[RMDB]
RNA sequence: GGGAACGACUCGAGUAGAGUCGAAAAGAGCUGUAGUACAGCAAGAAGCACGCGAUCCUUGGCACCGCGUGCAAGAAAAUAAGGCCGGCAAAGAAGGAAAGCCGGCAUAAGUGCCAAGUAAGAGAGACGGGAUACUAUAUUUCGAUAUAGUAUCCCGAAAAGAAACAACAACAACAAC
Reactivity to 2A3 in 0.01 (KOAc 150mM, MgCl2 10mM, bicine 150mM(pH8.5), 24C), signal-to-noise 4, nucleotides 027 to 126: g120a010g000c010u010g020u110a080g060u150a090c010a010g010c010a000a040g080a060a000g020c000a000c000g010c010g030a060u070c070c000u000u000g010g000c000a000c000c000g000c000g000u000g000c000a000a020g020a010a070a010a020u180a020a030g100g020c000c030g000g000c040a080a100a150g150a120a050g150g060a120a110a010g000c000c000g000g000c000a000u020a010a020g010u000g000c000c020a000a000g010u020a040a020g060a000g010a000g030a040
Reactivity to DMS in 0.01 (KOAc 150mM, MgCl2 10mM, bicine 150mM(pH8.5), 24C), signal-to-noise 3, nucleotides 027 to 126: g020a110g000c040u000g000u000a200g040u070a300c030a000g020c010a080a120g000a220a170g020c010a030c010g000c000g000a130u020c070c000u000u000g000g000c000a000c020c050g000c000g000u000g030c030a100a060g000a120a050a100a080u020a040a110g010g000c000c000g000g000c000a040a180a090g030a120a110g000g000a180a210a160g000c000c020g010g000c010a010u040a020a090g000u000g030c000c020a010a000g020u060a050a050g020a140g000a100g000a090
The record gives the reactivity of an RNA of 177 nucleotides to 2A3 and DMS.
Values cover nucleotides 27 to 126.
Conditions: 150 mM KOAc, 10 mM MgCl2 and 150 mM bicine (pH 8.5), 24 C.
The data come from the RNA Mapping Database (RMDB), library OK1LIB.